[RMDB]
RNA sequence: GGGAACGACUCGAGUAGAGUCGAAAAUAGACUACUCUGAGGCGCUUGAAGCAGCCAGAAAGCUAGGGUGUCACGUUUUCACAGCGGGUGUCUAUCGCGCCGAAGAUGGGAGGAUCUUAACGACGGGCCUUAUCAUCAGAUUCGUCUGAUGAUAAGGAAAAGAAACAACAACAACAAC
Reactivity to 2A3 in 0.01 (KOAc 150mM, MgCl2 10mM, bicine 150mM(pH8.5), 24C), signal-to-noise 5, nucleotides 027 to 126: u110a000g040a010c010u020a020c010u050c010u040g030a030g030g000c010g020c020u030u120g020a050a000g020c030a020g100c020c010a070g060a070a050a000g030c060u100a070g080g130g050u150g090u140c030a020c100g010u010u000u080u070c080a080c020a040g060c130g050g020g040u030g020u000c020u050a100u060c030g000c020g000c000c010g010a040a000g010a010u050g020g060g040a020g030g020a050u020c010u080u080a080a040c040g060a010c000g020g050g050
Reactivity to DMS in 0.01 (KOAc 150mM, MgCl2 10mM, bicine 150mM(pH8.5), 24C), signal-to-noise 7, nucleotides 027 to 126: u020a090g010a130c010u000a050c040u000c000u010g010a300g000g010c020g030c020u000u000g020a120a220g000c020a040g000c020c040a150g000a050a050a050g010c030u010a140g010g010g030u000g010u010c060a060c140g000u000u000u000u010c030a120c160a120g020c150g010g000g000u000g010u000c030u000a120u000c140g010c010g020c020c020g000a140a030g000a030u000g010g010g000a070g010g000a070u000c030u010u010a060a080c080g000a100c200g000g000g010